[RMDB]
RNA sequence: GGGAACGACUCGAGUAGAGUCGAAAACUGGUCCACGUCAGCCGAGACCAGCUGUACCACCGGAUCGCCGGGAAGCGCCAGACCCGUUCUGGUGAACCGGUAUUCGACGCGGUGUUCGGUGUCCGCGACAUGAGAGCGUCUUCGGACGCUCUCAUGUAAAAGAAACAACAACAACAAC
Reactivity to DMS in 0.01 (KOAc 150mM, MgCl2 10mM, bicine 150mM(pH8.5), 24C), signal-to-noise 2, nucleotides 027 to 126: c000u010g010g000u020c000c150a230c080g020u030c270a240g010c290c020g010a150g000a000c000c020a020g000c040u020g020u000a150c040c020a170c150c000g010g010a010u000c130g030c000c010g010g000g020a050a080g000c080g000c000c030a030g000a000c070c300c240g010u000u000c000u000g000g010u000g000a050a270c000c010g010g030u000a010u000u000c000g030a130c030g000c020g000g010u010g010u000u000c020g030g010u000g020u000c010c010g000c030g000
Reactivity to 2A3 in 0.01 (KOAc 150mM, MgCl2 10mM, bicine 150mM(pH8.5), 24C), signal-to-noise 1, nucleotides 027 to 126: c010u010g020g000u100c000c030a300c150g110u080c110a060g080c110c000g060a050g000a030c000c000a010g000c000u000g060u070a050c000c030a010c060c000g010g000a040u030c110g000c020c000g000g000g000a040a030g100c060g000c030c000a010g030a020c060c000c080g060u130u020c000u010g050g040u030g000a020a070c000c000g000g000u010a020u030u030c030g040a030c000g010c000g000g040u070g050u120u130c110g050g000u070g010u000c000c020g010c000g000